[RMDB]
RNA sequence: GGGAACGACUCGAGUAGAGUCGAAAAGAUAUGGACCGUUCAGCUGUCCAUGGCAAGGCUACAUUCUCGGAAACGAGAAUGAGCUGAUGACCCAUGGGAACUCGGCAAAUCUUACGGUCCUAAGUCAGAGAUGAUCUGUGUUCGCACAGAUCAUCUCAAAAGAAACAACAACAACAAC
Reactivity to DMS in 0.01 (KOAc 150mM, MgCl2 10mM, bicine 150mM(pH8.5), 24C), signal-to-noise 1, nucleotides 027 to 126: g000a030u000a000u010g000g000a030c000c000g030u010u010c180a300g070c010u000g030u000c010c000a010u010g030g010c000a080a020g010g030c000u020a210c000a000u000u000c000u010c030g000g000a010a000a040c000g010a030g020a000a010u000g000a140g010c000u010g000a040u000g000a100c300c000c000a010u000g000g020g000a050a160c300u030c000g030g010c030a080a120a050u050c200u000u010a000c000g090g000u000c000c000u000a000a070g000u000c000a180
Reactivity to 2A3 in 0.01 (KOAc 150mM, MgCl2 10mM, bicine 150mM(pH8.5), 24C), signal-to-noise 1, nucleotides 027 to 126: g010a000u030a010u020g000g000a000c000c010g000u050u070c130a070g030c010u020g030u090c000c030a010u000g000g020c050a130a300g020g000c000u170a200c300a000u010u020c000u010c000g000g000a000a000a000c010g010a000g010a000a000u000g010a010g000c020u000g010a030u000g010a010c000c000c000a000u000g000g020g060a260a140c130u080c160g030g030c030a050a100a300u210c130u220u150a010c020g000g000u040c040c000u000a000a000g000u000c020a000

About this RNA:
Structure probing data (DMS and 2A3) for a 177-nucleotide construct. Source: RMDB library TTRDES, as collected in RNAgym. The DMS profile rests on 871 reads.